[RMDB]
RNA sequence: GGGAACGACUCGAGUAGAGUCGAAAAGCCGGAUCUCGAGAUCGAUCUGGCCACGGCCGCUGCAGGCCGCGCCAGCGGCCGUGAUCUAGGCCUCGUACACGUACAUGAUCGUACGGCGCGAUCAUAGUACCUCUCACGGUUUCGACCGUGAGAGGUAAAAAGAAACAACAACAACAAC
Reactivity to DMS in 0.01 (KOAc 150mM, MgCl2 10mM, bicine 150mM(pH8.5), 24C), signal-to-noise 1, nucleotides 027 to 126: g000c010c000g020g010a040u010c020u000c060g010a070g000a090u000c030g000a050u000c010u000g000g020c000c020a010c030g050g020c010c000g000c040u000g010c070a100g010g000c050c020g000c100g010c270c000a030g000c000g010g010c030c020g000u000g000a040u010c090u020a120g000g000c040c020u000c110g000u010a090c120a070c100g010u010a040c070a040u000g000a020u000c010g000u000a060c030g010g000c030g030c020g020a030u000c000a050u000a150g000
Chemical mapping of a 177-nucleotide RNA with DMS. The RNA was probed in 150 mM KOAc, 10 mM MgCl2 and 150 mM bicine (pH 8.5) at 24 C. Values cover nucleotides 27 to 126.